[RMDB]
RNA sequence: GGGAACGACUCGAGUAGAGUCGAAAAUAUUAAAAAAAUGAUUUACCGGGUGUUACAUGACCCUGAAACACCGAGUCAUUGCGUCAAAAGUUGUAUAGUGAAGUGGCUAGGCAAUGAGAAUAGCGUAACCCUUACGUUCAUUCGUGAACGUAAGGGUAAAAGAAACAACAACAACAAC
Reactivity to DMS in 0.01 (KOAc 150mM, MgCl2 10mM, bicine 150mM(pH8.5), 24C), signal-to-noise 2, nucleotides 027 to 126: u040a140u000u010a040a000a030a010a040a080a030u000g000a130u000u000u080a090c150c070g000g020g020u010g000u000u010a140c010a000u030g020a140c050c050c060u000g080a060a000a030c060a000c020c010g000a120g020u000c010a010u020u000g010c000g020u030c110a080a060a100a080g000u000u000g020u010a060u000a060g040u000g030a040a130g050u040g000g000c050u000a050g000g010c010a020a040u000g000a070g010a050a010u000a030g010c020g000u000a060